[RMDB]
RNA sequence: GGGAACGACUCGAGUAGAGUCGAAAACUCAUUCACGGUUAUGUCUGUCUCUGGCAGAGCAGACGGUCAGGAGGAGGAGGUCACCAUCUUCACGAAGCCAAAGCCAAAUUCCGCCUUGUCCUGUAAAAGUAUAGUGGCGUUUCGACGCCACUAUACUAAAAGAAACAACAACAACAAC
Reactivity to 2A3 in 0.01 (KOAc 150mM, MgCl2 10mM, bicine 150mM(pH8.5), 24C), signal-to-noise 2, nucleotides 027 to 126: c000u060c000a100u110u140c090a030c050g110g000u110u110a080u180g030u050c020u020g080u020c000u000c020u090g190g000c170a020g000a000g000c000a000g000a000c000g030g000u000c030a020g010g060a020g050g000a000g020g040a000g050g010u030c010a020c070c000a120u050c000u060u120c020a030c060g120a020a000g010c000c040a050a000a000g010c000c000a070a020a150u050u010c030c000g000c000c000u020u070g040u030c000c000u040g050u070a000a030a080
Reactivity to DMS in 0.01 (KOAc 150mM, MgCl2 10mM, bicine 150mM(pH8.5), 24C), signal-to-noise 1, nucleotides 027 to 126: c000u050c010a200u070u000c080a020c030g000g010u000u020a040u100g000u000c000u000g000u040c000u010c000u000g020g000c210a150g010a030g000c000a000g000a000c010g030g000u000c090a060g030g000a110g000g000a120g000g000a230g050g000u000c140a110c020c070a060u020c040u020u000c000a060c120g030a070a080g010c000c060a000a240a100g030c010c060a090a120a030u030u000c040c050g050c010c000u060u010g000u000c000c000u000g010u020a050a200a150